[RMDB]
RNA sequence: GGGAACGACUCGAGUAGAGUCGAAAACAAGCUUUGUGGCUUUUGGCAGGUUACUUAACUGCUCUGUGCCUCAGUUUCCCCACUUGGAAGCCAAGAUUAUGAUAGUGCCUUUCUUGUUGAAGCAUUGUGAAGAUUAAUGUGUUGACAUGUAAAAACAGGGUAAAUACUGGUUCGCCAGUAUUUACCCAAAAGAAACAACAACAACAAC
Reactivity to 2A3 in 0.01 (KOAc 150mM, MgCl2 10mM, bicine 150mM(pH8.5), 24C), signal-to-noise 1, nucleotides 027 to 156: c130a130a000g040c010u190u210u300g020u060g000g060c020u090u160u060u070g060g010c010a060g040g030u300u230a100c080u110u110a300a110c020u020g010c010u000c020u080g120u080g010c000c000u010c000a040g000u040u000u000c000c000c000c000a010c000u120u060g030g020a080a020g060c110c040a000a110g000a090u020u200a040u260g000a070u020a130g060u010g000c040c020u050u140u000c040u110u070g010u000u050g040a050a000g040c000a010u010u010g060u070g020a000a000g020a040u020u150a180a020u110g040u000g050u120u030g010a060c050a220u050g120u290a000a000a000a120a000c140a030
This 207-nucleotide RNA was probed chemically with 2A3. For 2A3, 308 sequencing reads were counted. Reactivities are given for positions 27 through 156. Reactivities are rounded to 0.1 and cut off at 0 and 3.